The record gives the reactivity of an RNA of 177 nucleotides to 2A3 and DMS.
Values cover nucleotides 27 to 126.
DMS adducts were read by reverse transcription with MarathonRT.
Conditions: 150 mM KOAc, 10 mM MgCl2 and 150 mM bicine (pH 8.5), 24 C.

RNA sequence: GGGAACGACUCGAGUAGAGUCGAAAAGCCGGGCGGAGGGGCUCCUCACUUCUCAGACGGGGUGGCCCGGCGGAGACGCUCCUCACCUCCCAGACGGGGUCGUGGCCGGGCAGAGGUGCUCUUCACACAGACAGCUCAAUUUCGAUUGAGCUGUCUGAAAAGAAACAACAACAACAAC
Reactivity to 2A3 in 0.01 (KOAc 150mM, MgCl2 10mM, bicine 150mM(pH8.5), 24C), signal-to-noise 2, nucleotides 027 to 126: g020c010c000g050g070g050c140g020g020a030g000g000g000g000c010u030c000c000u030c010a070c040u130u060c090u030c040a070g060a150c170g020g000g030g010u090g070g040c000c010c020g000g000c070g020g020a050g000a020c030g010c050u020c000c010u030c000a110c000c050u070c000c050c000a040g010a090c090g030g010g010g010u120c040g020u070g100g000c020c000g010g000g010c020a020g010a010g040g020u060g040c000u000c000u040u060c030a010c000a000
Reactivity to DMS in 0.01 (KOAc 150mM, MgCl2 10mM, bicine 150mM(pH8.5), 24C), signal-to-noise 1, nucleotides 027 to 126: g060c020c030g030g000g000c130g080g000a010g020g000g000g020c010u030c000c020u000c010a150c130u000u000c010u000c080a100g030a130c190g000g000g010g010u000g000g000c000c000c000g000g000c010g000g000a170g020a040c040g020c000u000c000c000u000c000a170c080c040u010c000c010c000a130g000a120c200g000g000g000g000u020c050g010u000g010g000c020c020g000g000g000c010a180g010a030g010g040u000g000c030u000c030u010u010c000a110c160a300

Description:
DMS (dimethyl sulfate) methylates the pairing face of unpaired adenines and cytosines.